[RMDB]
RNA sequence: GGGAACGACUCGAGUAGAGUCGAAAAUUGGUCGGUUCUUGCCAGCACGCAGCCCGUGACGCCGUCCUGUGUUAUUGAGGUAGGGCGGGUGGUGGAGGCAGUGAUGCAAGUCCGCGGCGCCUCCUCAAGUACGAGGUAGUUUCGACUACCUCGUACUAAAAGAAACAACAACAACAAC
Reactivity to DMS in 0.01 (KOAc 150mM, MgCl2 10mM, bicine 150mM(pH8.5), 24C), signal-to-noise 2, nucleotides 027 to 126: u010u000g000g010u000c020g020g020u000u000c020u000u020g000c100c070a070g020c010a030c020g000c070a110g020c020c020c030g030u000g020a090c110g020c000c020g010u000c010c010u030g030u010g020u020u010a230u010u010g020a060g020g010u010a050g000g000g000c020g020g000g030u010g020g040u010g010g010a100g010g040c010a100g020u010g000a140u000g010c020a050a050g010u000c040c020g010c030g010g010c010g000c050c010u000c020c020u000c060a050
Reactivity to 2A3 in 0.01 (KOAc 150mM, MgCl2 10mM, bicine 150mM(pH8.5), 24C), signal-to-noise 2, nucleotides 027 to 126: u090u090g080g000u020c020g000g000u000u040c000u020u050g050c080c040a070g100c010a020c000g100c150a040g050c010c000c000g050u070g070a030c060g020c170c020g070u010c010c000u000g020u030g090u210u220a270u210u280g240a130g020g140u070a010g000g010g000c030g030g000g000u020g050g050u080g030g020a080g020g000c030a030g000u030g030a010u030g010c010a050a000g050u050c020c020g210c000g160g030c010g040c000c000u060c010c010u020c050a030
The record gives the reactivity of an RNA of 177 nucleotides to DMS and 2A3. For DMS the reverse transcriptase was MarathonRT. For 2A3, 1,643 sequencing reads were counted. It was measured as part of the RMDB library OK2TST.